The record gives the reactivity of an RNA of 207 nucleotides to DMS and 2A3. 2A3 adducts were read by reverse transcription with SuperScript II with manganese. DMS adducts were read by reverse transcription with MarathonRT. The DMS profile rests on 2,617 reads. Source: RMDB library M2RFPK, as collected in RNAgym. Conditions: 150 mM KOAc, 10 mM MgCl2 and 150 mM bicine (pH 8.5), 24 C.

RNA sequence: GGGAACGACUCGAGUAGAGUCGAAAAAUCAGCCUUCGUUCUGUAAACGGGGUUGGAUCCGACUCUCAUAGGCUCUCCAACCCAACUCUUACUCAAUACGUCCUCGUCGUACAGAACGGUAACAUGUAAAACGAAGGCUGCUUCGGCAGCCUUCGAAUCUAUGUAAAUUCUUCGGAAUUUACAUAGAAAAAGAAACAACAACAACAAC
Reactivity to DMS in 0.01 (KOAc 150mM, MgCl2 10mM, bicine 150mM(pH8.5), 24C), signal-to-noise 1, nucleotides 027 to 156: a120u000c050a070g010c030c010u000u000c030g020u000u000c000u040g020u000a180a100a060c040g020g030g020g040u000u010g010g020a050u010c010c020g020a070c030u010c120u020c100a250u010a120g030g010c010u000c110u000c040c040a080a060c020c010c030a070a030c020u000c040u020u010a020c040u000c040a070a210u000a090c080g010u000c000c010u010c000g020u000c070g040u000a080c020a010g000a010a020c000g010g000u000a020a080c050a130u000g010u000a080a130a110a190c020g000a000a000g010g050c130u000g010c040u030u030c210g020g030c000a040g000c000c000u000u000c000g000a040a060
Reactivity to 2A3 in 0.01 (KOAc 150mM, MgCl2 10mM, bicine 150mM(pH8.5), 24C), signal-to-noise 2, nucleotides 027 to 156: a000u130c000a030g080c010c020u090u040c010g020u000u000c010u000g010u020a020a060a070c050g020g000g000g000u000u000g000g000a020u280c000c000g090a100c030u170c080u090c100a180u170a140g000g000c000u030c000u000c010c010a030a000c000c030c010a010a000c020u020c020u080u210a100c020u050c100a040a180u120a200c040g110u100c020c050u080c050g020u010c020g000u010a000c000a010g000a010a030c000g030g000u050a050a030c060a090u140g100u250a020a020a050a040c020g000a000a010g000g000c050u000g020c030u010u020c070g100g020c000a010g000c020c000u000u000c010g000a000a000